[RMDB]
RNA sequence: GGGAACGACUCGAGUAGAGUCGAAAAUUGCAUAAUGAGCCUACGAGUUGCUCCUCACUAGCAAGAUUAAGACUUUAAGGGUCGUAGUCGAAGCGAAAGCGAGUCUGAAUAGGGCGAAUUAGUUAGUCAAAUGGACAAAGUUCGCUUUGUCCAUUUGAAAAGAAACAACAACAACAAC
Reactivity to DMS in 0.01 (KOAc 150mM, MgCl2 10mM, bicine 150mM(pH8.5), 24C), signal-to-noise 3, nucleotides 027 to 126: u000u000g010c070a180u000a080a060u000g000a220g010c030c020u000a120c100g010a080g020u000u000g010c010u000c040c000u000c100a050c050u000a120g010c040a070a190g000a060u010u000a070a150g000a020c000u000u000u000a080a180g010g020g000u000c000g010u000a040g030u000c010g000a130a090g040c030g010a120a080a030g010c030g010a060g020u010c040u000g000a110a060u010a120g010g000g020c000g000a120a070u000u000a070g010u010u000a090g010u010
Reactivity to 2A3 in 0.01 (KOAc 150mM, MgCl2 10mM, bicine 150mM(pH8.5), 24C), signal-to-noise 2, nucleotides 027 to 126: u030u020g010c000a050u050a070a050u080g010a010g030c040c010u040a060c040g090a050g200u060u080g000c010u030c010c010u020c020a080c040u020a010g020c040a050a000g010a030u040u040a070a020g000a030c010u090u040u110a070a070g160g000g000u000c020g000u000a000g080u000c020g050a050a010g000c020g000a000a020a000g020c010g020a030g030u000c020u070g020a090a070u110a210g000g000g050c010g000a010a000u050u010a060g020u020u080a010g060u010